Chemical mapping of a 177-nucleotide RNA with 2A3 and DMS.
[RMDB]
RNA sequence: GGGAACGACUCGAGUAGAGUCGAAAACGAGCAUGUAUCAUUUCAGUGAGCACGUACCUCCAGCGCGGGAGAGCAAGAGCUUGAGUGAAGCUCAUAGAAACAACAGUAAGUUGCAGAGGUGGUGCAAAGAAUAAAUAGAAUUCGUUCUAUUUAUUCUAAAAGAAACAACAACAACAAC
Reactivity to 2A3 in 0.01 (KOAc 150mM, MgCl2 10mM, bicine 150mM(pH8.5), 24C), signal-to-noise 9, nucleotides 027 to 126: c050g020a030g080c090a080u070g020u090a050u060c020a040u020u060u030c020a020g040u020g070a010g000c010a010c080g060u070a040c000c000u000c010c030a030g000c020g000c030g050g110g040a180g020a020g060c050a110a060g020a010g080c000u030u030g040a040g050u120g070a060a010g000c000u000c000a010u030a040g100a030a080a010c020a010a000c010a020g070u170a260a020g010u070u040g020c040a020g010a010g040g010u020g010g000u010g000c000a030a050
Reactivity to DMS in 0.01 (KOAc 150mM, MgCl2 10mM, bicine 150mM(pH8.5), 24C), signal-to-noise 9, nucleotides 027 to 126: c080g010a120g010c140a100u000g010u010a040u010c050a070u000u010u010c050a130g010u000g000a090g020c020a050c100g010u020a090c280c010u010c010c050a060g010c030g010c050g010g020g010a110g000a100g010c090a110a100g010a060g000c010u010u000g010a110g010u020g000a060a030g010c000u000c010a050u010a070g000a110a080a120c070a030a050c070a130g010u030a070a110g010u000u000g010c070a110g000a060g010g020u000g010g010u000g010c030a050a070
Conditions: 150 mM KOAc, 10 mM MgCl2 and 150 mM bicine (pH 8.5), 24 C. For 2A3 the reverse transcriptase was SuperScript II with manganese.